[RMDB]
RNA sequence: GGGAACGACUCGAGUAGAGUCGAAAAUGCCGUCGUUGACAGCGCCCAACGCUUCACAACCUGAAAGAAGCGCCUGUUAUCAGGACGGUUGAUCCAUUUACCGGUGCAGACCUCUGCAAACACCGGGUUUAACAAGCAUCUUUCGAGAUGCUUGUAAGUAAAGAUCGUGGUUCGCCACGAUCUUUACAAAAGAAACAACAACAACAAC
Reactivity to 2A3 in 0.01 (KOAc 150mM, MgCl2 10mM, bicine 150mM(pH8.5), 24C), signal-to-noise 1, nucleotides 027 to 156: u120g020c000c000g020u020c010g040u020u110g010a000c000a010g020c030g050c080c070c100a090a080c080g010c040u010u010c020a040c000a220a210c050c040u130g050a100a090a050g040a040a000g000c000g000c000c000u010g000u030u040a050u120c080a080g060g060a000c000g000g040u000u060g000a010u000c020c000a030u090u010u120a090c020c000g000g040u000g000c010a010g070a280c010c140u250c060u140g150c050a060a070a000c060a020c020c020g020g000g030u050u150u030a000a000c020a000a000g000c000a000u000c000u020u110u160c170g110a050g000a000u000g000c000u000u000g000u000a000a000
Reactivity to DMS in 0.01 (KOAc 150mM, MgCl2 10mM, bicine 150mM(pH8.5), 24C), signal-to-noise 1, nucleotides 027 to 156: u020g030c040c040g000u000c040g000u000u000g010a000c050a030g000c060g030c180c030c030a110a030c030g030c010u020u020c010a160c190a160a300c180c080u000g000a060a300a300g010a040a030g000c000g000c030c120u000g070u000u000a020u030c010a030g080g010a040c040g020g000u020u030g000a250u020c040c010a200u000u010u000a060c000c010g000g020u030g000c020a130g000a110c210c060u030c060u000g000c030a300a180a030c000a020c000c000g030g040g000u000u000u000a160a030c010a010a000g040c000a020u000c010u000u000u030c240g000a110g050a020u000g000c000u010u010g000u020a010a240